An RNA of 177 nucleotides, treated with DMS and 2A3 and read out base by base. The reactions ran in a buffer of 150 mM KOAc, 10 mM MgCl2 and 150 mM bicine (pH 8.5), at 24 C. 2A3 adducts were read by reverse transcription with SuperScript II with manganese. For DMS, 3,147 sequencing reads were counted. It was measured as part of the RMDB library RFMREP.
[RMDB]
RNA sequence: GGGAACGACUCGAGUAGAGUCGAAAAACGGCCGAAUGAACUAGCCCUGAAAAUGGAUGGCGCUCAAGUGUAUUACCUAUACUCUGCCGUUAGUAUUCUUUUAAAGAUAUUAACGAGUAGGCAGGCGGUUCGUAUAUAACUUCGGUUAUAUACGAACAAAAGAAACAACAACAACAAC
Reactivity to DMS in 0.01 (KOAc 150mM, MgCl2 10mM, bicine 150mM(pH8.5), 24C), signal-to-noise 3, nucleotides 027 to 126: a140c120g010g000c000c030g020a050a060u000g020a100a060c040u000a140g030c060c010c040u000g000a070a060a110a110u010g000g010a130u010g010g010c070g030c040u000c080a040a050g010u000g030u000a040u000u010a090c060c040u000a090u000a080c100u000c020u000g000c020c000g010u000u000a010g000u000a000u000u000c010u010u000u010u010a080a110a030g010a020u000a000u000u000a000a010c000g000a130g010u000a030g000g000c160a070g010g020c130g020
Reactivity to 2A3 in 0.01 (KOAc 150mM, MgCl2 10mM, bicine 150mM(pH8.5), 24C), signal-to-noise 3, nucleotides 027 to 126: a010c010g070g000c020c010g050a040a110u090g020a070a030c010u020a030g000c000c000c010u040g060a080a040a040a010u090g040g010a040u030g020g000c050g000c030u020c050a070a030g030u010g050u090a080u080u110a060c000c000u060a040u020a110c050u020c000u050g000c000c000g000u000u000a000g000u000a020u150u140c030u000u210u040u190a170a300a010g010a010u000a000u010u000a010a000c000g010a050g080u030a020g010g010c040a010g010g010c000g050